[RMDB]
This 177-nucleotide RNA was probed chemically with DMS and 2A3. For DMS the reverse transcriptase was MarathonRT. The 2A3 profile rests on 1,099 reads. For 2A3 the reverse transcriptase was SuperScript II with manganese.

RNA sequence: GGGAACGACUCGAGUAGAGUCGAAAAUAGUCUGCUAUUUUUAAAAGAUUCUCUACUUUAGGCGAAGAGGUAUCCCAACGACGAAUUUGUCCAUUGGAAAUGCCGACGUUUCUUUCUAAUUGGGCGAACCGUCAAUGAUCUUCGGAUCAUUGACGGUAAAAGAAACAACAACAACAAC
Reactivity to DMS in 0.01 (KOAc 150mM, MgCl2 10mM, bicine 150mM(pH8.5), 24C), signal-to-noise 1, nucleotides 027 to 126: u010a010g030u090c040u090g030c000u010a010u000u000u000u060u060a060a040a060a200g000a250u000u000c000u000c000u000a020c000u000u000u000a040g000g010c000g000a040a090g030a060g000g040u020a130u010c130c000c000a110a110c300g000a060c090g000a060a190u060u000u000g000u000c030c010a120u000u010g000g010a090a130a030u000g020c220c170g000a040c080g050u000u000u000c010u010u000u000c060u020a060a000u000u000g020g070g000c010g030a000
Reactivity to 2A3 in 0.01 (KOAc 150mM, MgCl2 10mM, bicine 150mM(pH8.5), 24C), signal-to-noise 3, nucleotides 027 to 126: u000a000g060u030c100u130g150c040u100a050u010u020u000u020u040a100a230a020a020g080a070u300u080c000u000c000u000a010c000u010u040u080a040g030g040c050g050a130a020g050a060g190g070u090a150u050c000c000c000a040a020c050g180a000c020g040a060a080u040u020u090g000u030c000c000a000u000u040g030g030a000a030a020u080g110c090c040g030a090c040g060u010u090u040c020u010u040u000c020u060a050a040u120u060g020g000g000c010g010a000